[RMDB]
RNA sequence: GGGAACGACUCGAGUAGAGUCGAAAAGAAGGCAAGAUCGACAACGACGUUCUGGCCGCACUUAAGACGAAGAAAGCAUCCAAAUAUGAUCUUGAGUAUGCAGAUGUGCCACAGAACAUGCGGGCCGACUCAGGUUUCGGUUCGCCGAAACCUGAGUAAAAGAAACAACAACAACAAC
Reactivity to DMS in 0.01 (KOAc 150mM, MgCl2 10mM, bicine 150mM(pH8.5), 24C), signal-to-noise 1, nucleotides 027 to 126: g010a190a090g020g020c020a110a010g000a090u000c050g020a160c110a160a040c100g000a070c070g010u000u000c040u020g000g010c120c160g000c040a020c030u000u000a100a080g000a050c090g000a130a040g010a090a060a140g020c050a010u000c080c020a080a050a160u020a060u040g010a130u000c030u000u000g020a050g010u010a030u000g000c040a000g000a130u000g000u000g030c020c070a110c090a040g010a030a010c050a120u010g000c090g010g010g010c010c010g020
Reactivity to 2A3 in 0.01 (KOAc 150mM, MgCl2 10mM, bicine 150mM(pH8.5), 24C), signal-to-noise 1, nucleotides 027 to 126: g090a040a010g010g000c020a010a010g020a140u100c030g030a020c040a120a090c040g100a010c030g000u030u000c010u030g040g000c000c020g000c010a000c000u030u140a040a000g070a070c030g080a050a140g050a050a110a020g000c010a040u040c030c040a040a050a060u300a140u200g130a070u060c020u030u030g000a030g010u080a000u040g080c000a040g050a200u040g100u090g030c010c000a040c000a020g040a000a010c020a010u120g020c010g020g030g020c000c000g000